Chemical mapping of a 177-nucleotide RNA with 2A3 and DMS. For DMS the reverse transcriptase was MarathonRT.
RNA sequence: GGGAACGACUCGAGUAGAGUCGAAAAUUGAAGUCUCUGGCAUCGGCAUAGUUGGGACUGCCUGCGAGAACAUUGUUCUAAUGUGGCCUAGAAAGCAUUCAUAAAUAUCGUUCACGUGGGAACGGGUAUCCCAUCAGUCAUUCGUGACUGAUGGGAUAAAAGAAACAACAACAACAAC
Reactivity to 2A3 in 0.01 (KOAc 150mM, MgCl2 10mM, bicine 150mM(pH8.5), 24C), signal-to-noise 4, nucleotides 027 to 126: u060u090g050a060a050g070u020c020u000c020u060g060g020c010a060u030c080g020g000c010a060u120a130g080u050u120g050g000g030a010c010u040g030c000c000u000g020c000g030a050g000a050a040c080a130u010u060g090u100u030c070u140a080a100u040g020u090g020g010c010c020u040a080g110a110a090a020g000c040a040u030u060c020a020u190a180a130a000u150a070u070c060g020u000u010c020a040c180g000u100g000g030g040a020a030c060g090g000g000u010
Reactivity to DMS in 0.01 (KOAc 150mM, MgCl2 10mM, bicine 150mM(pH8.5), 24C), signal-to-noise 2, nucleotides 027 to 126: u050u020g010a070a090g040u000c000u010c040u010g010g010c030a060u080c060g000g000c050a050u040a070g010u020u000g000g000g000a130c070u000g000c010c000u000g000c000g010a150g010a010a010c000a080u010u000g000u020u000c080u010a020a040u000g010u000g000g020c040c000u010a230g000a110a090a150g030c030a060u000u000c070a090u020a050a060a050u050a000u010c030g020u010u000c000a060c180g010u000g040g000g000a050a080c050g010g010g000u010